Description:
This 177-nucleotide RNA was probed chemically with 2A3 and DMS. DMS adducts were read by reverse transcription with MarathonRT. The RNA was probed in 150 mM KOAc, 10 mM MgCl2 and 150 mM bicine (pH 8.5) at 24 C. Reactivities are given for positions 27 through 126. The DMS profile rests on 3,207 reads.

[RMDB]
RNA sequence: GGGAACGACUCGAGUAGAGUCGAAAAGACGUGCGCGCAAUCAUUGACGAGGCUGAAGUGCGUUGCCUCAUGGUCAGCGCUGAGGAGCUUGCGGCCAUUGCACCGGUCAUCGGCGGCUGCGCGAGCGGACGUGUCCCAAGUUCGCUUGGGACACGUCAAAAGAAACAACAACAACAAC
Reactivity to 2A3 in 0.01 (KOAc 150mM, MgCl2 10mM, bicine 150mM(pH8.5), 24C), signal-to-noise 2, nucleotides 027 to 126: g080a020c040g020u020g020c000g000c000g010c010a000a060u040c040a110u060u280g050a050c040g010a000g030g000c010u040g080a300a030g070u040g010c030g050u030u040g040c010c000u060c050a010u030g030g040u050c060a040g040c090g010c200u090g080a120g060g050a040g060c020u070u070g030c010g010g000c040c010a040u080u300g000c000a020c050c020g000g030u130c150a280u050c200g050g010c020g010g010c020u010g010c020g000c010g010a020g010c040g000
Reactivity to DMS in 0.01 (KOAc 150mM, MgCl2 10mM, bicine 150mM(pH8.5), 24C), signal-to-noise 3, nucleotides 027 to 126: g000a280c030g020u010g000c020g030c000g010c010a040a020u000c050a140u010u010g020a100c060g010a050g000g000c010u000g010a130a150g030u010g010c000g030u000u000g010c050c030u000c080a060u000g010g010u000c030a100g020c060g020c130u010g010a090g020g010a050g010c030u020u000g030c080g000g000c000c080a060u000u010g010c010a030c010c010g020g020u020c030a120u000c000g010g000c060g010g000c080u000g000c020g020c020g010a080g020c020g020